[RMDB]
RNA sequence: GGGAACGACUCGAGUAGAGUCGAAAAAAGUGAUUAUUCGUAAUCACUUCACGCCGGGCGCGGUGGCGCGUGCCUGUAGUCCCAGCUACUCGGGUGGCUAAACGACGUACCCGUUCGCGGGUACGAACUCAAGACGUACAUUCGUGUACGUCUUGAGAAAAGAAACAACAACAACAAC
Reactivity to 2A3 in 0.01 (KOAc 150mM, MgCl2 10mM, bicine 150mM(pH8.5), 24C), signal-to-noise 2, nucleotides 027 to 126: a000a000g020u010g000a000u000u020a040u060u110c230g040u050a030a000u010c000a010c000u010u010c060a050c050g060c000c000g020g000g000c020g020c010g020g050u030g010g030c060g000c000g010u010g000c010c000u040g100u090a020g030u000c000c020c010a050g000c010u090a120c000u010c060g110g010g000u040g020g060c070u100a120a070a020c080g090a020c000g020u010a010c010c010c000g020u000u020c280g000c000g050g010g000u000a010c010g020a020a000
Reactivity to DMS in 0.01 (KOAc 150mM, MgCl2 10mM, bicine 150mM(pH8.5), 24C), signal-to-noise 2, nucleotides 027 to 126: a030a020g000u010g000a000u010u000a010u000u010c190g020u010a000a000u000c000a000c000u010u000c110a180c130g030c070c040g000g000g010c000g010c030g010g010u000g000g010c100g000c010g020u000g000c010c010u000g000u000a050g010u000c040c000c010a090g020c010u010a050c010u010c060g010g020g040u010g010g020c020u010a050a070a120c110g000a220c020g000u010a010c000c000c010g020u000u010c170g050c000g000g000g020u000a000c020g000a020a090